[RMDB]
RNA sequence: GGGAACGACUCGAGUAGAGUCGAAAAGGUCAGACCCAAAUUCAACCUGGACCAAUGAUCUCAUUUUGAAAGGCAUCUUGUUCGGGGAGAAAAGAGUGAGCAAGAGCUGCAUACUGGAAUUUUGCGGCCUCCAUGCGGAAUUCGUUCCGCAUGGAGGAAAAGAAACAACAACAACAAC
Reactivity to DMS in 0.01 (KOAc 150mM, MgCl2 10mM, bicine 150mM(pH8.5), 24C), signal-to-noise 1, nucleotides 027 to 126: g010g000u000c060a060g000a300c050c000c000a160a170a200u000u000c000a000a250c000c050u000g000g000a000c120c180a200a110u000g000a080u000c050u000c020a170u000u000u020u200g030a060a070a000g000g050c170a000u000c070u000u000g000u000u050c040g110g000g010g070a300g010a000a010a100a080g000a150g000u000g000a060g030c000a120a040g020a040g000c000u050g000c010a070u140a000c180u000g000g000a150a300u000u000u000u040g000c090g000g000
Reactivity to 2A3 in 0.01 (KOAc 150mM, MgCl2 10mM, bicine 150mM(pH8.5), 24C), signal-to-noise 4, nucleotides 027 to 126: g090g010u080c040a020g020a130c000c000c030a050a020a030u060u020c020a040a030c010c000u020g050g010a030c000c000a030a080u160g040a150u070c070u030c070a150u110u180u170u150g140a170a080a000g020g030c020a120u040c000u060u020g020u020u000c020g010g000g070g020a080g050a020a070a010a010g090a020g000u130g020a020g030c010a020a040g000a010g040c050u030g000c040a000u080a160c080u110g180g110a170a140u070u070u070u090g040c050g000g030
Source: RMDB library OK1LIB, as collected in RNAgym. This 177-nucleotide RNA was probed chemically with DMS and 2A3. The reactions ran in a buffer of 150 mM KOAc, 10 mM MgCl2 and 150 mM bicine (pH 8.5), at 24 C. For DMS, 851 sequencing reads were counted.